[RMDB]
RNA sequence: GGGAACGACUCGAGUAGAGUCGAAAAGCUACAUUAUUGGAUAUCUGUGACACUUUCUCUGCCCCGCCAAUCGAUAUCAUUCGUAUGGCGACUGGCUAUGCAGGUUGUUACCAAGGCUGCAUCAACCUAAACAGACUAGAUUCGUCUAGUCUGUUUAAAAAGAAACAACAACAACAAC
Reactivity to DMS in 0.01 (KOAc 150mM, MgCl2 10mM, bicine 150mM(pH8.5), 24C), signal-to-noise 9, nucleotides 027 to 126: g010c040u000a060c090a090u010u010a140u010u000g010g010a130u000a050u000c070u000g020u000g000a110c070a060c080u000u010u000c040u010c090u010g010c010c010c240c050g010c010c010a020a300u000c020g010a030u010a100u010c210a160u010u000c040g020u010a220u000g000g010c010g020a070c160u000g010g000c030u000a070u000g000c030a020g000g010u000u000g010u000u000a110c090c080a070a080g010g010c040u000g000c050a050u000c090a040a080c040c040
Reactivity to 2A3 in 0.01 (KOAc 150mM, MgCl2 10mM, bicine 150mM(pH8.5), 24C), signal-to-noise 8, nucleotides 027 to 126: g010c020u060a030c060a180u140u190a110u130u210g050g010a040u040a020u130c030u040g040u030g030a010c010a030c120u080u100u050c060u010c040u060g010c000c010c000c000g000c000c010a020a060u030c000g000a010u050a060u230c100a090u140u070c010g010u070a100u110g000g020c010g030a040c090u090g010g000c000u020a040u090g010c000a000g040g010u070u070g040u070u080a060c010c020a040a040g040g010c010u020g000c010a050u040c030a050a060c000c010
This 177-nucleotide RNA was probed chemically with DMS and 2A3. Values cover nucleotides 27 to 126. For 2A3, 14,668 sequencing reads were counted. It was measured as part of the RMDB library OK2TST.